[RMDB]
An RNA of 207 nucleotides, treated with DMS and 2A3 and read out base by base. The data come from the RNA Mapping Database (RMDB), library M2RFPK. The RNA was probed in 150 mM KOAc, 10 mM MgCl2 and 150 mM bicine (pH 8.5) at 24 C.
RNA sequence: GGGAACGACUCGAGUAGAGUCGAAAAAAUGCCGCCUCAGUUCCAAGCUCUUUCGUGGCACUGUAAACAGUCCAAUUGAGUUAGGGGCAGUCAACCACGUUGCGAAGCUAAAUUAUCUGGUCGAGAGUUACGAUUCCCUACUUCGGUAGGGAAUCAAUCGUUGUAGAUUCUUCGGAAUCUACAACGAAAAAGAAACAACAACAACAAC
Reactivity to DMS in 0.01 (KOAc 150mM, MgCl2 10mM, bicine 150mM(pH8.5), 24C), signal-to-noise 1, nucleotides 027 to 156: a060a020u000g020c080c020g050c030c010u010c010a110g060u000u010c020c050a160a220g010c000u000c000u010u000u000c030g030u010g030g040c050a070c060u010g010u020a090a090a120c050a080g030u000c020c020a030a100u010u010g010a120g000u000u010a100g030g000g030g030c010a030g010u000c020a060a090c070c040a070c120g010u040u000g000c020g010a140a150g000c100u010a060a020a080u000u000a060u010c070u020g000g000u000c090g020a060g010a120g040u010u000a060c070g010a030u000u000c000c000c000u010a010c010u000u010c270g020g040u000a020g030g010g000a000a000u000c000a020a080
Reactivity to 2A3 in 0.01 (KOAc 150mM, MgCl2 10mM, bicine 150mM(pH8.5), 24C), signal-to-noise 2, nucleotides 027 to 156: a000a010u060g010c020c020g070c030c000u030c030a030g030u050u030c050c000a030a040g000c000u040c030u060u130u120c110g090u110g000g000c100a010c010u020g060u090a160a100a090c010a050g040u040c010c020a050a070u050u080g030a070g020u080u140a080g010g000g010g000c000a000g000u010c020a000a050c030c020a050c020g050u040u050g000c060g030a070a050g030c040u090a080a110a180u150u080a100u070c040u060g020g010u000c060g040a000g030a050g130u070u120a040c060g000a000u000u000c020c000c000u010a030c010u030u090c190g090g000u010a000g000g030g010a000a000u010c000a000a000

The DMS profile rests on 2,216 reads.
For 2A3 the reverse transcriptase was SuperScript II with manganese.